[RMDB]
RNA sequence: GGGAACGACUCGAGUAGAGUCGAAAAGGACUACAAUCGAUGAAGUAGGCCAAAAGGAUGAUGCUUUCUUCAUGUAUGGAGAGGAUAUUGAUUGGUGCUAUAGAAUCAAACAGGCAGGAUGGAAGAACGUACGUACUCAUUUCGAUGAGUACGUACGAAAAGAAACAACAACAACAAC
Reactivity to DMS in 0.01 (KOAc 150mM, MgCl2 10mM, bicine 150mM(pH8.5), 24C), signal-to-noise 4, nucleotides 027 to 126: g010g000a070c050u000a060c060a050a070u030c070g000a060u020g000a150a130g010u010a020g010g010c030c020a080a080a050a090g000g020a100u000g000a040u030g000c060u000u010u000c000u010u000c040a090u030g020u020a050u020g030g000a060g000a040g010g010a110u010a020u000u010g010a150u000u020g020g010u020g010c060u010a120u000a040g000a200a050u020c050a010a040a110c140a090g000g000c030a050g010g000a040u020g000g010a060a070g000a040a130
Reactivity to 2A3 in 0.01 (KOAc 150mM, MgCl2 10mM, bicine 150mM(pH8.5), 24C), signal-to-noise 6, nucleotides 027 to 126: g030g010a010c020u020a030c080a090a080u140c110g070a050u060g020a060a030g010u050a000g010g010c000c000a070a090a010a010g140g030a040u170g010a050u110g050c020u110u130u070c000u040u020c020a030u070g090u210a120u160g050g010a040g000a010g020g020a030u040a060u120u100g060a100u030u030g020g020u080g070c010u030a020u030a170g110a040a020u050c010a000a070a060c010a020g040g020c010a010g000g060a020u050g000g020a010a050g010a090a030
Structure probing data (DMS and 2A3) for a 177-nucleotide construct. Source: RMDB library OK1LIB, as collected in RNAgym. Values are in units of 0.01, from 0 to 300, in steps of 10. The 2A3 profile rests on 7,279 reads. The DMS profile rests on 6,935 reads. 2A3 is a SHAPE reagent: it acylates the 2'-hydroxyl of flexible nucleotides of all four kinds. The RNA was probed in 150 mM KOAc, 10 mM MgCl2 and 150 mM bicine (pH 8.5) at 24 C. For DMS the reverse transcriptase was MarathonRT.